About this RNA: This 177-nucleotide RNA was probed chemically with 2A3 and DMS. High DMS reactivity at an A or C suggests that its Watson-Crick edge is free. For DMS, 2,418 sequencing reads were counted. It was measured as part of the RMDB library OK1LIB. 2A3 adducts were read by reverse transcription with SuperScript II with manganese.
RNA sequence: GGGAACGACUCGAGUAGAGUCGAAAAGAAAAAGUCGUCGAGUCCGGAGAAUAUCGAGUAGUGGAUACGAUCCGGAGAGUAUCGGAGACGAAAGUCUCGAACUACAAGAUAUCGAGACGACGAAAAAGGGAAUAUAUUGCUUCGGCAAUAUAUUCCCAAAAGAAACAACAACAACAAC
Reactivity to 2A3 in 0.01 (KOAc 150mM, MgCl2 10mM, bicine 150mM(pH8.5), 24C), signal-to-noise 3, nucleotides 027 to 126: g060a000a120a000a010a000g000u000c000g000u000c000g020a020g140u010c020c020g000g000a050g040a130a000u010a000u020c030g020a040g170u130a030g040u220g210g000a000u010a000c000g000a020u000c000c000g020g000a010g010a020g010u020a070u030c040g050g010a000g000a000c000g040a040a050a010g010u000c010u000c000g010a070a030c020u020a010c010a040a080g000a180u040a020u080c020g000a030g010a020c020g000a000c050g040a060a080a010a000a000
Reactivity to DMS in 0.01 (KOAc 150mM, MgCl2 10mM, bicine 150mM(pH8.5), 24C), signal-to-noise 2, nucleotides 027 to 126: g010a110a090a040a180a140g000u010c000g030u000c000g010a170g050u010c000c000g000g000a070g000a170a140u000a000u000c000g000a250g020u030a130g010u040g000g040a030u010a000c060g000a300u000c000c040g000g030a020g040a070g030u000a050u000c040g030g000a000g040a000c000g010a020a130a140g000u010c010u000c010g000a130a050c160u050a060c120a130a110g000a060u000a030u050c000g030a230g000a020c000g000a000c010g010a020a050a010a170a050